[RMDB]
RNA sequence: GGGAACGACUCGAGUAGAGUCGAAAAUUGAAUGGCGCAGAGGACGAGGUUGGAAUUGUCAUCGAUGAACAAACUUCAGCGAUCGUCGCGGUAUAUCCGUCGCGACCGACGGAAACAUAUCGUCCUAGUAUUUAAUAGGUUUCGACCUAUUAAAUACAAAAGAAACAACAACAACAAC
Reactivity to DMS in 0.01 (KOAc 150mM, MgCl2 10mM, bicine 150mM(pH8.5), 24C), signal-to-noise 9, nucleotides 027 to 126: u010u010g010a100a100u010g000g010c030g020c120a110g000a110g010g000a030c020g010a030g010g020u000u000g010g010a050a070u010u010g010u000c040a160u010c140g010a080u000g010a110a040c080a050a070a110c160u000u000c010a030g000c010g000a080u000c050g010u000c050g010c010g010g010u000a030u000a110u000c020c020g000u000c030g010c200g010a100c220c040g010a020c000g000g000a030a030a070c140a030u000a030u000c010g010u000c010c010u000a130
Reactivity to 2A3 in 0.01 (KOAc 150mM, MgCl2 10mM, bicine 150mM(pH8.5), 24C), signal-to-noise 7, nucleotides 027 to 126: u100u120g060a050a070u110g030g000c080g000c140a070g060a050g200g020a010c010g010a010g050g000u030u030g010g030a050a060u040u040g030u030c020a070u110c110g210a190u140g050a050a020c030a050a080a040c040u020u020c010a010g010c020g200a260u030c020g000u000c010g000c010g010g000u020a030u000a010u040c010c010g000u000c010g040c140g150a070c070c020g000a000c010g000g000a010a090a000c050a020u030a010u030c010g000u020c000c000u010a030